[RMDB]
RNA sequence: GGGAACGACUCGAGUAGAGUCGAAAAGCAGAUCACCUGAGGUCAGCAGUUCGAGACCAGCCUGGCCAACAUGGUGAAACCCGGUCUCUACUAAAAAUACAAAAAUUAGCUGGGUGUGGUGGUGCAUACGUGUAAUCCCAGCUACCUGAGAACGAGAUAGUCGAUCUAAAUUCGUUUAGAUCGACUAAAAAGAAACAACAACAACAAC
Reactivity to 2A3 in 0.01 (KOAc 150mM, MgCl2 10mM, bicine 150mM(pH8.5), 24C), signal-to-noise 2, nucleotides 027 to 156: g050c040a010g030a160u040c000a000c020c000u020g000a000g040g000u010c010a000g000c040a060g030u100u140c140g110a030g050a200c020c040a000g000c010c010u000g000g000c030c000a010a000c100a030u250g010g000u000g000a030a000a000c000c020c000g000g000u030c040u000c000u010a100c030u090a060a080a070a060a030u170a110c080a020a100a060a050a090u130u090a010g020c000u020g000g030g000u020g000u010g050g030u010g030g040u030g010c030a030u060a080c100g010u010g060u110a040a080u040c040c000c000a030g040c010u010a030c010c010u070g010a030g060a100a030c010g030a030g040a100
Reactivity to DMS in 0.01 (KOAc 150mM, MgCl2 10mM, bicine 150mM(pH8.5), 24C), signal-to-noise 2, nucleotides 027 to 156: g030c050a110g010a150u000c010a030c010c030u000g010a090g030g010u000c000a070g070c090a080g020u000u000c110g020a150g000a090c040c010a100g000c050c030u010g010g010c000c000a010a140c080a150u020g010g010u000g020a010a010a020c000c010c040g030g010u000c020u010c000u010a090c030u020a000a040a050a050a040u000a130c020a040a040a070a010a110u000u000a020g030c010u010g060g020g020u020g030u000g000g010u000g020g000u010g000c040a100u000a030c030g010u010g010u010a060a100u000c010c000c010a000g030c070u000a010c050c010u010g010a170g030a110a080c050g000a120g010a240
An RNA of 207 nucleotides, treated with 2A3 and DMS and read out base by base. Values are in units of 0.01, from 0 to 300, in steps of 10. For 2A3, 1,224 sequencing reads were counted. It was measured as part of the RMDB library OK3TST. The RNA was probed in 150 mM KOAc, 10 mM MgCl2 and 150 mM bicine (pH 8.5) at 24 C. For DMS, 2,970 sequencing reads were counted.